[RMDB]
RNA sequence: GGGAACGACUCGAGUAGAGUCGAAAAGUAUAGCGAAGUUUGAGGCGACGAGCUAUACGAUGAAUCAGCCUCUAUUGAUAUCGGUAUACAGAUCAGCGGCGAUCAGAUACCGUAAUUAGUAGCCGCUAUCCGGAGUGGAGACGCACGACGGUCGUCAAAUAUAGUAGCCAUUCGUGGCUACUAUAUUAAAAGAAACAACAACAACAAC
Reactivity to DMS in 0.01 (KOAc 150mM, MgCl2 10mM, bicine 150mM(pH8.5), 24C), signal-to-noise 3, nucleotides 027 to 156: g010u000a030u000a010g010c020g000a120a210g010u000u000u060g030a120g000g050c020g000a050c070g000a300g010c000u000a010u000a020c000g010a190u020g010a080a160u000c120a120g020c010c000u000c010u000a080u010u000g030a110u000a130u010c010g010g040u010a040u000a090c050a210g000a100u010c060a100g040c070g020g000c080g010a060u000c040a190g010a110u000a010c020c020g010u000a050a050u000u000a080g010u000a060g010c010c030g000c010u000a070u000c030c020g010g010a210g000u010g000g010a130g020a050c040g000c100a070c050g000a110c060g040g000u000c070g010u000c050a100
Reactivity to 2A3 in 0.01 (KOAc 150mM, MgCl2 10mM, bicine 150mM(pH8.5), 24C), signal-to-noise 4, nucleotides 027 to 156: g000u000a000u000a000g000c020g090a140a020g020u020u080u130g040a000g020g030c030g000a020c020g020a010g020c000u000a000u010a000c010g000a030u120g100a040a110u160c110a020g010c000c010u000c040u060a140u030u230g080a060u080a050u200c000g000g030u010a000u010a090c090a070g010a020u030c030a060g030c010g070g000c020g000a010u020c030a040g010a060u020a010c000c000g010u010a070a080u060u140a050g110u060a000g000c010c020g020c040u030a040u020c000c020g000g000a030g020u030g030g110a210g020a070c060g060c070a000c010g040a000c010g010g050u060c070g070u070c060a000

The data come from the RNA Mapping Database (RMDB), library OK3TST. This 207-nucleotide RNA was probed chemically with DMS and 2A3. High DMS reactivity at an A or C suggests that its Watson-Crick edge is free. The reactions ran in a buffer of 150 mM KOAc, 10 mM MgCl2 and 150 mM bicine (pH 8.5), at 24 C. For DMS, 5,308 sequencing reads were counted. For DMS the reverse transcriptase was MarathonRT.